[RMDB]
RNA sequence: GGGAACGACUCGAGUAGAGUCGAAAAGAUAUGGAAGUGAGUGGCCCGUACAGCUACCCACCUCGGAAACGAGAGGCUGUACACUCCCACCACUUCCUAAGUCAAAACGGGGGCUUCGGCCCCCGAACAAAUAUAUUAUGUUCGCAUAAUAUAUUUGAAAAGAAACAACAACAACAAC
Reactivity to DMS in 0.01 (KOAc 150mM, MgCl2 10mM, bicine 150mM(pH8.5), 24C), signal-to-noise 3, nucleotides 027 to 126: g000a050u000a300u010g010g000a000a010g020u000g000a140g030u010g000g000c300c300c110g000u000a000c000a030g010c000u000a080c100c090c130a300c120c000u000c000g010g000a160a080a110c010g000a000g010a080g000g000c000u000g010u000a000c020a050c120u000c300c000c000a010c000c010a010c000u000u000c010c000u000a000a070g000u000c020a050a050a140a120c030g010g000g000g030g010c010u000u020c200g010g000c000c000c010c000c010g000a010a030
Conditions: 150 mM KOAc, 10 mM MgCl2 and 150 mM bicine (pH 8.5), 24 C. The record gives the reactivity of an RNA of 177 nucleotides to DMS. For DMS, 1,474 sequencing reads were counted. The data come from the RNA Mapping Database (RMDB), library TTRDEL. Values cover nucleotides 27 to 126.